[RMDB]
RNA sequence: GGGAACGACUCGAGUAGAGUCGAAAACUAGCUUCGAAACACCAUCGAUCGUCCCUGCUUCUUUUACCUUCUCCUGGCUCUUCGAGUGAGACGCGACCGGUGGCAUCACCUCUCGGUUCGUCUUCCAACCUGCUUUUUGUCUAUCUGAGCCUCUGCCCAUACGGAGGCACUUCGGUGCCUCCGUAUGAAAAGAAACAACAACAACAAC
Reactivity to 2A3 in 0.01 (KOAc 150mM, MgCl2 10mM, bicine 150mM(pH8.5), 24C), signal-to-noise 1, nucleotides 027 to 156: c080u090a050g120c050u040u030c010g060a090a070a020c030a010c040c010a080u010c000g030a010u000c010g000u020c020c020c000u010g000c040u030u070c000u060u110u070u040a080c020c000u080u050c090u060c030c020u000g020g030c010u000c000u070u080c100g010a050g060u120g010a020g020a020c000g000c070g020a020c000c000g020g000u000g010g030c020a110u090c030a050c060c010u050c000u100c000g010g000u050u040c020g010u000c020u040u030c010c000a040a030c010c050u010g080c050u130u080u060u050u110g090u080c080u060a110u040c020u090g050a010g040c010c030u010c020u040g010c000c000

Structure probing data (2A3) for a 207-nucleotide construct. 2A3 adducts were read by reverse transcription with SuperScript II with manganese. 2A3 is a SHAPE reagent: it acylates the 2'-hydroxyl of flexible nucleotides of all four kinds. The RNA was probed in 150 mM KOAc, 10 mM MgCl2 and 150 mM bicine (pH 8.5) at 24 C. It was measured as part of the RMDB library VIROID.